The record gives the reactivity of an RNA of 207 nucleotides to 2A3. The reactions ran in a buffer of 150 mM KOAc, 10 mM MgCl2 and 150 mM bicine (pH 8.5), at 24 C. It was measured as part of the RMDB library OK3TST.
RNA sequence: GGGAACGACUCGAGUAGAGUCGAAAAAAUCUUGUUCAUUCAUGUCUAAAACGUCCUCGUUAGAGGAGAACGAGUCGCUACCGUCACUGCCGUCGCUCGAGGAGACCGAGUCGCCUCCGUCGCUCGAGGAGACCGAGUCGCUACUGUCGCCGUUCUGGUGUAUGCAACACUUCGGUGUUGCAUACACAAAAGAAACAACAACAACAAC
Reactivity to 2A3 in 0.01 (KOAc 150mM, MgCl2 10mM, bicine 150mM(pH8.5), 24C), signal-to-noise 1, nucleotides 027 to 156: a000a080u230c120u100u110g040u090u060c030a100u080u000c000a130u090g170u090c090u140a110a120a070a020c040g230u140c020c020u000c030g080u120u120a040g000a000g040g000a000g000a000a000c010g000a000g000u000c010g070c030u030a020c010c000g040u000c030a010c170u060g000c000c000g010u010c030g060c040u030c010g030a000g020g010a050g000a010c010c030g030a010g050u180c040g060c060c000u010c000c030g130u080c070g010c000u030c010g000a000g050g050a040g000a000c000c030g030a000g030u010c030g000c000u060a040c010u020g110u070c050g030c150c010g060u110u020c100u090g090